[RMDB]
This 207-nucleotide RNA was probed chemically with 2A3.
It was measured as part of the RMDB library M2RFPK.
Values cover nucleotides 27 to 156.
For 2A3 the reverse transcriptase was SuperScript II with manganese.
RNA sequence: GGGAACGACUCGAGUAGAGUCGAAAAGGACUGCGCAGUCCGGCAACAUCAGCAGAGAGCCCGCUAUACGUGACGGAUUGGCUGAAUCGUACAGAAAUAUUGAGCCUCCUGCAAGAGGCAGCCAAGCAAAACGUACGUGAGUUCGCUCACGUACGAAGUCAGUAGGUAGCUUCGGCUACCUACUGACAAAAGAAACAACAACAACAAC
Reactivity to 2A3 in 0.01 (KOAc 150mM, MgCl2 10mM, bicine 150mM(pH8.5), 24C), signal-to-noise 1, nucleotides 027 to 156: g020g000a000c040u020g000c100g060c130a010g000u000c000c000g050g050c020a020a070c000a090u190c040a010g000c080a000g040a000g000a030g190c000c000c020g010c070u040a030u040a170c110g030u110g020a020c020g050g060a110u020u050g020g000c000u000g000a020a050u030c010g030u090a020c040a050g170a060a080a040u170a130u140u100g000a050g010c010c000u000c010c070u150g060c050a060a050g010a000g020g000c010a000g050c010c000a000a000g100c060a010a200a010a010c000g010u000a000c000g000u000g000a000g000u030u200c240g010c060u010c000a000c010g000u030a000c000g000a030a000